[RMDB]
Source: RMDB library RNAMAK, as collected in RNAgym.
Structure probing data (2A3) for a 207-nucleotide construct.
The RNA was probed in 150 mM KOAc, 10 mM MgCl2 and 150 mM bicine (pH 8.5) at 24 C.
RNA sequence: GGGAACGACUCGAGUAGAGUCGAAAAGGGGUCGGUUCGAUAAGGACGUGUGGAGCGAAGAACUGUGGCUGAAGCCUCCACGGCCACAGGGAGCUCCACCGUCCUUUUGACGAACCGACGGAGGCACCCAAAACGUUCAAUCUUCGGAUUGAACGAAGAAAUCGACACAGUUCGCUGUGUCGAUUUCAAAAGAAACAACAACAACAAC
Reactivity to 2A3 in 0.01 (KOAc 150mM, MgCl2 10mM, bicine 150mM(pH8.5), 24C), signal-to-noise 2, nucleotides 027 to 156: g140g020g090g020u000c010g010g010u000u000c020g010a040u010a300a150g010g010a000c000g240u300g010u000g150g000a010g020c010g060a300a010g000a010a010c000u000g010u000g000g010c010u020g020a060a020g000c000c000u020c000c000a010c020g000g000c020c010a000c000a000g010g010g000a000g040c010u060c000c000a000c000c000g000u000c000c000u000u010u010u010g000a000c000g000a000a000c000c010g000a000c010g000g000a010g000g000c000a070c010c000c000a020a170a050a050c000g000u000u000c000a000a000u000c010u070u110c300g100g000a000u000u000g000a000a000c000g010a050a020